[RMDB]
RNA sequence: GGGAACGACUCGAGUAGAGUCGAAAACACUCACGAUUCGUCGUGAGUGAAAGAACGCCAAAGUGACGCAAUCUUCCGCGUCAGGAAGGCGAAACGAGGAAAAAACCGGGUCCUUCGGGACCCGGAAGAUGCUUACUCAGUUCGCUGAGUAAGCAUCAAAAGAAACAACAACAACAAC
Reactivity to 2A3 in 0.01 (KOAc 150mM, MgCl2 10mM, bicine 150mM(pH8.5), 24C), signal-to-noise 1, nucleotides 027 to 126: c000a010c000u010c000a000c000g030a010u060u090c200g040u020c010g010u150g000a020g000u000g000a000a000a010g020a040a030c000g020c010c010a000a080a060g100u010g000a000c000g000c010a020a100u070c200u260u080c160c030g010c000g010u010c010a000g020g020a080a010g000g000c060g020a030a010a000c020g040a110g060g050a160a060a020a020a000a040c000c010g000g100g010u040c000c000u030u080c180g010g000g000a010c000c000c000g010g010a020a020
Reactivity to DMS in 0.01 (KOAc 150mM, MgCl2 10mM, bicine 150mM(pH8.5), 24C), signal-to-noise 2, nucleotides 027 to 126: c010a000c000u000c000a000c000g000a000u000u010c230g030u010c000g030u010g010a010g010u000g000a030a060a100g020a040a170c080g010c010c000a030a170a200g000u000g000a040c000g020c030a190a110u000c140u020u000c200c170g000c010g000u010c000a020g020g000a200a210g000g000c000g010a020a100a070c100g000a160g020g010a000a070a050a080a090a050c000c000g010g030g020u010c000c000u000u000c270g010g030g010a000c000c000c010g000g000a000a000

Structure probing data (2A3 and DMS) for a 177-nucleotide construct. Reactivities are given for positions 27 through 126. 2A3 adducts were read by reverse transcription with SuperScript II with manganese. The reactions ran in a buffer of 150 mM KOAc, 10 mM MgCl2 and 150 mM bicine (pH 8.5), at 24 C. Source: RMDB library M2PK50, as collected in RNAgym. For 2A3, 1,659 sequencing reads were counted.